Description: Conditions: 150 mM KOAc, 10 mM MgCl2 and 150 mM bicine (pH 8.5), 24 C. Chemical mapping of a 177-nucleotide RNA with DMS and 2A3. DMS adducts were read by reverse transcription with MarathonRT. The 2A3 profile rests on 73,293 reads.

RNA sequence: GGGAACGACUCGAGUAGAGUCGAAAAGGUCCAGGUGGAUGCCUCGUGGUGCUACGAAUGCCUACAGCUGGAAUCUGCUGUAGAAGCCUACUGUAUGUCUCCUGACAUACAGUAGAUACCUGCAAGGGAGAGGUGAUCACUUCGGUGAUCAUCUUUCAAAAGAAACAACAACAACAAC
Reactivity to DMS in 0.01 (KOAc 150mM, MgCl2 10mM, bicine 150mM(pH8.5), 24C), signal-to-noise 9, nucleotides 027 to 126: g000g010u010c010c010a060g010g020u010g000g000a040u010g000c030c070u000c040g010u000g010g010u020g010c050u010a080c070g010a060a070u020g010c040c010u000a050c010a020g000c000u000g000g010a070a130u020c040u000g010c010u000g010u010a030g000a110a090g000c090c000u000a000c000u000g010u000a000u000g000u000c000u030c230c240u040g000a020c000a000u000a000c000a000g000u000a000g000a070u010a030c040c010u000g010c110a090a100g010g010
Reactivity to 2A3 in 0.01 (KOAc 150mM, MgCl2 10mM, bicine 150mM(pH8.5), 24C), signal-to-noise 9, nucleotides 027 to 126: g040g000u010c000c000a010g010g040u030g030g020a030u040g000c000c000u020c010g020u030g020g030u070g010c010u010a020c030g060a060a030u100g020c000c000u010a010c000a010g000c000u020g010g020a050a090u050c020u040g000c000u010g000u010a010g020a050a010g020c000c000u000a000c000u000g000u000a000u000g010u000c020u060c080c110u180g000a000c000a000u000a000c000a000g000u000a000g000a000u010a020c000c000u010g020c030a030a040g070g040